[RMDB]
RNA sequence: GGGAACGACUCGAGUAGAGUCGAAAAACGAGCAGGUGCCAUAACCUCCAAAUGGUACCUGCGCGUGUUGUCAGCAAGGUCUAAGCUGAUAACACUAUGCUAACGACUGAAGCAUAUUGGAUUACGGGCCAAGGGCAGCUAAGAUCGGAAGCUGUCCGAUUAUGAACCAGUUCGCUGGUUCAUAAUCAAAAGAAACAACAACAACAAC
Reactivity to DMS in 0.01 (KOAc 150mM, MgCl2 10mM, bicine 150mM(pH8.5), 24C), signal-to-noise 5, nucleotides 027 to 156: a050c030g040a050g010c000a020g000g020u010g040c010c010a040u000a070a110c050c040u000c270c080a090a170a030u000g000g030u000a010c000c020u000g000c000g020c030g000u000g020u010u000g020u000c000a010g010c000a080a050g000g010u000c030u000a100a230g000c000u000g000a020u000a010a020c010a030c020u010a030u000g020c030u000a100a160c080g000a170c110u000g010a120a070g010c020a070u000a080u000u010g000g010a170u000u000a080c070g010g010g010c010c020a110a130g040g020g010c000a010g010c020u000a140a100g020a150u000c090g000g000a110a090g010c000u000g020u000c000c020
Reactivity to 2A3 in 0.01 (KOAc 150mM, MgCl2 10mM, bicine 150mM(pH8.5), 24C), signal-to-noise 9, nucleotides 027 to 156: a000c040g000a020g000c000a000g000g010u000g000c000c000a020u040a130a160c040c070u120c070c060a120a190a010u010g000g000u000a000c000c000u000g000c000g000c010g000u010g000u000u010g000u000c000a000g000c020a100a130g030g020u030c030u110a110a020g000c000u000g000a000u010a000a000c000a000c020u020a020u040g000c010u040a110a080c080g150a100c150u150g090a090a000g010c010a010u020a070u070u140g080g020a040u100u120a090c080g010g010g010c010c010a070a090g010g000g000c000a000g000c010u050a080a070g040a240u150c090g060g040a040a000g000c000u000g010u010c010c000